[RMDB]
Annotation:
The record gives the reactivity of an RNA of 207 nucleotides to 2A3. The reactions ran in a buffer of 150 mM KOAc, 10 mM MgCl2 and 150 mM bicine (pH 8.5), at 24 C. Values cover nucleotides 27 to 156. It was measured as part of the RMDB library OK3TST. The 2A3 profile rests on 558 reads. 2A3 adducts were read by reverse transcription with SuperScript II with manganese.
RNA sequence: GGGAACGACUCGAGUAGAGUCGAAAAGUUCAAGUGGGUUAUACAAUCGAAUUUGCUUGGACAGGAGUAUUUUCUAUAGCUCAGCACAACUUCUUAGUAACUAAAAGGGUUUGGUAUCCUAUGAACGACAUCUGCGAGUUAGAACUAACCGAUAACAUCUUCGCUUUUGAUUCGUCAAAAGCGAAGAAAAAGAAACAACAACAACAAC
Reactivity to 2A3 in 0.01 (KOAc 150mM, MgCl2 10mM, bicine 150mM(pH8.5), 24C), signal-to-noise 1, nucleotides 027 to 156: g030u000u020c030a000a020g010u040g020g040g030u000u180a130u060a260c170a100a120u120c130g040a020a020u060u050u020g000c010u010u000g000g000a020c000a020g120g070a020g050u060a060u110u200u010u040c110u080a060u070a140g000c000u000c030a030g010c040a040c010a020a090c010u070u010c020u010u120a090g000u110a020a160c110u070a070a010a170a000g060g080g000u080u050u080g000g080u040a080u060c000c000u010a010u110g030a050a020c030g040a000c060a080u080c080u050g040c040g000a030g030u090u010a010g030a070a000c020u030a000a000c030c040g040a060u140a140a100c030a020